[RMDB]
RNA sequence: GGGAACGACUCGAGUAGAGUCGAAAAAGAUUUGCAAACGGACGGAACUAAAUACUGUCACUUUUAUGUCUAACUUAUCGUUAACUCUGCAAAAAGAAAAUAAGAAAAAGAAAAUCAGUGGAUAGGAACCGGUACAAUUCUUCGGAAUUGUACCGGUAAAAGAAACAACAACAACAAC
Reactivity to 2A3 in 0.01 (KOAc 150mM, MgCl2 10mM, bicine 150mM(pH8.5), 24C), signal-to-noise 1, nucleotides 027 to 126: a010g070a040u090u040u110g080c100a040a000a140c040g070g000a000c000g040g000a100a000c140u050a110a000a120u250a050c010u050g070u120c010a040c050u000u160u000u000a060u140g040u000c000u000a030a000c000u060u090a050u130c030g020u040u000a110a060c140u000c030u060g050c100a110a180a030a000a020g050a020a010a000a000u230a000a130g050a010a220a000a000a000g110a000a060a000a030u020c030a000g060u000g050g070a090u130a000g000g000a010
Source information:
Structure probing data (2A3) for a 177-nucleotide construct. It was measured as part of the RMDB library RFM100. For 2A3, 643 sequencing reads were counted. Reactivities are rounded to 0.1 and cut off at 0 and 3. 2A3 adducts were read by reverse transcription with SuperScript II with manganese. The RNA was probed in 150 mM KOAc, 10 mM MgCl2 and 150 mM bicine (pH 8.5) at 24 C.